[RMDB]
RNA sequence: GGGAACGACUCGAGUAGAGUCGAAAAGAUGUUCCGCUCAUGCAGCGCCGACAGGUAGCGUCCCGCAUGGCGGAGGGCGAUGCGGGCAUCGCCGGCCACCGGCAGGAUCAGUUCGGCGUUGCCCAGACUGCACUAAUUUAUUCGUAAAUUAGUGCAGAAAAGAAACAACAACAACAAC
Reactivity to 2A3 in 0.01 (KOAc 150mM, MgCl2 10mM, bicine 150mM(pH8.5), 24C), signal-to-noise 9, nucleotides 027 to 126: g120a070u200g050u060u010c010c010g040c070u150c060a080u170g000c000a010g000c000g000c000c010g040a040c040a050g080g160u180a050g040c030g060u060c020c020c010g000c080a090u120g040g000c030g010g010a030g020g030g010c030g020a010u050g040c100g050g100g060c030a020u030c010g000c000c000g180g010c040c010a060c020c000g050g000c040a040g010g030a030u070c040a040g030u130u040c000g000g000c000g000u000u000g000c000c010c000a070g020a030
Reactivity to DMS in 0.01 (KOAc 150mM, MgCl2 10mM, bicine 150mM(pH8.5), 24C), signal-to-noise 9, nucleotides 027 to 126: g000a140u010g010u000u000c010c010g010c130u010c120a110u010g010c010a040g010c000g010c000c010g010a060c100a130g020g020u010a100g020c140g000u000c010c010c040g010c010a040u010g030g010c020g010g010a030g010g000g010c020g010a020u000g010c070g020g010g010c030a020u000c020g010c000c000g010g010c020c030a040c020c010g010g010c080a050g000g010a030u000c060a140g000u010u000c010g010g010c010g010u000u000g010c000c150c130a070g000a220